[RMDB]
RNA sequence: GGGAACGACUCGAGUAGAGUCGAAAAGGAAGCUGAGGUUUUUCCUAUGUCUGAACAAUGACGCCAUCGUUUUCUGGGUCUUCGAAGCAGUUGCAAAGAAAUGCCCAGAUGGAGGACAGAGGGCCAAUCAUUAUACUUCGUUCGCGAAGUAUAAUGAAAAAGAAACAACAACAACAAC
Reactivity to DMS in 0.01 (KOAc 150mM, MgCl2 10mM, bicine 150mM(pH8.5), 24C), signal-to-noise 9, nucleotides 027 to 126: g000g010a070a100g010c040u000g010a100g020g010u000u000u010u010u000c010c010u000a070u010g010u000c020u000g000a130a120c170a090a090u010g010a060c090g010c150c080a090u010c050g010u000u000u010u010c020u000g000g000g000u010c210u000u000c020g000a160a240g010c020a250g010u020u040g020c010a030a090a240g000a010a030a040u010g010c000c000c000a020g010a020u000g010g010a180g000g000a040c030a050g000a060g000g000g000c080c090a070a130
Reactivity to 2A3 in 0.01 (KOAc 150mM, MgCl2 10mM, bicine 150mM(pH8.5), 24C), signal-to-noise 9, nucleotides 027 to 126: g050g010a030a020g010c060u060g050a100g070g060u040u050u010u060u060c010c010u030a050u060g020u000c020u050g050a100a040c060a100a130u170g030a040c040g030c070c020a110u110c070g030u040u050u050u020c010u010g000g000g000u010c030u020u010c030g040a110a020g000c030a120g090u300u300g070c010a090a100a010g020a020a030a030u120g010c000c000c000a000g000a010u020g020g030a050g020g020a000c010a020g040a050g010g020g000c010c020a010a030
The record gives the reactivity of an RNA of 177 nucleotides to DMS and 2A3. 2A3 adducts were read by reverse transcription with SuperScript II with manganese. Source: RMDB libraries RFM100 and RFMREP, as collected in RNAgym. The reactions ran in a buffer of 150 mM KOAc, 10 mM MgCl2 and 150 mM bicine (pH 8.5), at 24 C. As a SHAPE reagent, 2A3 marks flexible, mostly unpaired nucleotides at the ribose 2'-OH.